[RMDB]
RNA sequence: GGGAACGACUCGAGUAGAGUCGAAAAGCCUCUAUGGCUUACCCUUUCCAACUAGGCUUCCAAGACGCCACUUCACCCAUCAUAGAAGAACUCCUACACUUUCACGAUCACACCUUAAUAAUCGUAUUCUUAAUCAGCUCUUUAGUGUUAUAUAUCAGCUCUUUAUACAGUUCGCUGUAUAAAGAGCAAAAGAAACAACAACAACAAC
Reactivity to 2A3 in 0.01 (KOAc 150mM, MgCl2 10mM, bicine 150mM(pH8.5), 24C), signal-to-noise 5, nucleotides 027 to 156: g000c050c000u060c140u180a200u280g000g000c020u000u070a080c010c000c000u030u100u000c050c030a080a080c070u090a060g030g000c000u090u030c030c000a050a040g050a050c060g030c010c030a030c030u050u040c020a060c000c050c010a060u040c020a070u060a080g050a060a000g030a080a050c010u020c000c020u050a030c030a040c080u090u140u080c050a010c020g020a030u050c030a020c000a050c110c030u160u120a120a040u080a070a030u120c040g020u040a080u100u110c020u020u100a100a100u080c050a030g020c020u020c000u130u100u160a090g010u040g030u120u080a110u030a030u050a030u150c020a000
Reactivity to DMS in 0.01 (KOAc 150mM, MgCl2 10mM, bicine 150mM(pH8.5), 24C), signal-to-noise 1, nucleotides 027 to 156: g000c000c000u020c250u020a130u010g040g020c020u000u000a090c040c000c010u010u010u000c030c070a060a140c070u010a100g020g000c060u010u000c020c040a130a060g010a030c030g030c010c000a030c040u000u000c040a090c020c000c000a130u010c020a100u000a110g010a040a040g020a100a060c010u000c030c060u010a100c040a090c060u000u000u030c050a060c030g000a050u000c020a090c010a080c100c070u000u000a100a100u000a010a100u010c080g070u000a100u000u000c080u000u000a000a140u000c050a090g000c020u000c020u010u000u010a100g010u000g000u000u000a080u010a130u010a090u030c070a220

Overview: Chemical mapping of a 207-nucleotide RNA with 2A3 and DMS. 2A3 adducts were read by reverse transcription with SuperScript II with manganese. The 2A3 profile rests on 2,385 reads.